[RMDB]
RNA sequence: GGGAACGACUCGAGUAGAGUCGAAAAGAAAGAAAGAAAGAAAUCUGACAGAAUGACGGAUUCGAUCGUUGUGCUCGGCGGGCCACCACGUCAUUCCUUCGCACUGUCUCCGGGCAGACCGCCAUAAAAAAGCGGAUCUACUUCGGUAGAUCCGCAAGUUAACAGAUAACUUCGGUUAUCUGUUAACAAAAGAAACAACAACAACAAC
Reactivity to 2A3 in 0.01 (KOAc 150mM, MgCl2 10mM, bicine 150mM(pH8.5), 24C), signal-to-noise 2, nucleotides 027 to 156: g050a020a050a010g060a020a060a030g040a030a090a000g040a040a030a030u060c050u140g010a080c020a100g110a160a070u070g010a040c050g020g030a030u080u130c080g060a100u110c030g020u060u040g020u020g050c050u060c070g020g000c010g000g010g000c040c000a020c060c010a060c020g000u000c010a040u020u050c000c000u110u140c040g030c040a060c010u000g000u000c010u000c060c090g060g000g000c000a020g080a020c010c010g000c000c020a040u180a010a130a000a050a020a000g000c010g000g030a000u000c000u000a010c000u020u040c140g050g000u000a000g000a010u000c020c000g000c000a000a000